[RMDB]
RNA sequence: GGGAACGACUCGAGUAGAGUCGAAAAGUCAAGAUGUGUAGGAUAGGUGGGAGGCUUUGAAGUGUGGACGCCAGUCUGCAUGGAGCCGACCUUGAAAUACCACCCUUUAUUGGAAAAACAAAGUGAACUGUACUUAGAUGUUCGCAUCUAAGUACAGAAAAGAAACAACAACAACAAC
Reactivity to 2A3 in 0.01 (KOAc 150mM, MgCl2 10mM, bicine 150mM(pH8.5), 24C), signal-to-noise 3, nucleotides 027 to 126: g100u050c010a020a000g010a050u010g000u020g010u040a010g050g120a040u010a000g040g000u000g020g020g020a170g000g000c010u300u180u020g020a030a010g000u000g000u010g010g000a000c000g030c040c000a010g000u000c000u010g000c010a010u010g000g020a000g000c000c000g000a020c000c000u000u010g010a000a010a010u010a010c000c010a000c000c010c030u020u080u040a290u060u100g020g040a080a090a030a000a020c060a040a130a040g150u140g110a090a040
Reactivity to DMS in 0.01 (KOAc 150mM, MgCl2 10mM, bicine 150mM(pH8.5), 24C), signal-to-noise 6, nucleotides 027 to 126: g000u000c020a030a040g010a020u000g010u010g010u000a010g000g000a050u000a010g010g010u010g000g000g000a080g020g010c000u010u000u020g010a140a130g000u000g000u010g010g020a010c010g020c080c250a050g010u000c000u000g010c010a010u000g000g000a000g030c000c000g020a070c300c040u000u000g000a030a020a080u000a090c000c000a010c000c000c010u000u000u000a090u010u000g000g000a030a070a040a100a120c140a070a090a110g010u010g010a110a170
Conditions: 150 mM KOAc, 10 mM MgCl2 and 150 mM bicine (pH 8.5), 24 C. This 177-nucleotide RNA was probed chemically with 2A3 and DMS. For 2A3 the reverse transcriptase was SuperScript II with manganese. For DMS the reverse transcriptase was MarathonRT. For 2A3, 4,525 sequencing reads were counted.